[RMDB]
Structure probing data (DMS and 2A3) for a 177-nucleotide construct. For 2A3, 1,504 sequencing reads were counted. As a SHAPE reagent, 2A3 marks flexible, mostly unpaired nucleotides at the ribose 2'-OH. For DMS, 1,284 sequencing reads were counted. The reactions ran in a buffer of 150 mM KOAc, 10 mM MgCl2 and 150 mM bicine (pH 8.5), at 24 C. The data come from the RNA Mapping Database (RMDB), library OK2TRN.

RNA sequence: GGGAACGACUCGAGUAGAGUCGAAAAAUUAAUCGUAAUGCUAGCAUAUCGGCAUCGUAUACGAUGCUACGCGGCCGUAGCAUUACGGCAUAUAUGCUAUAGCCGAUAUCGAUCGGCCGCGGCCGUAGAAGCAUCACUACUUCGGUAGUGAUGCUUCAAAAGAAACAACAACAACAAC
Reactivity to DMS in 0.01 (KOAc 150mM, MgCl2 10mM, bicine 150mM(pH8.5), 24C), signal-to-noise 2, nucleotides 027 to 126: a050u010u000a140a080u030c010g000u000a020a000u000g020c000u000a120g020c200a080u000a060u000c130g000g000c010a040u000c050g040u000a160u000a080c090g010a030u010g000c020u020a030c120g000c020g000g030c020c000g000u000a020g000c030a020u000u000a050c000g000g030c210a040u000a060u000a040u020g000c040u000a030u000a130g000c000c020g000a030u000a010u000c120g000a050u000c000g040g000c010c110g020c020g010g040c030c020g050u000a140
Reactivity to 2A3 in 0.01 (KOAc 150mM, MgCl2 10mM, bicine 150mM(pH8.5), 24C), signal-to-noise 1, nucleotides 027 to 126: a010u180u180a030a030u030c030g030u050a010a010u010g020c010u000a030g030c020a060u030a040u250c060g000g000c010a000u000c010g040u090a120u000a270c050g000a000u000g000c030u130a000c040g000c000g010g000c000c000g020u010a000g000c000a000u010u000a010c010g000g020c060a110u150a000u020a010u110g100c070u050a050u090a150g000c010c020g020a020u020a100u140c170g090a020u030c000g020g020c070c000g000c000g010g000c020c000g020u060a040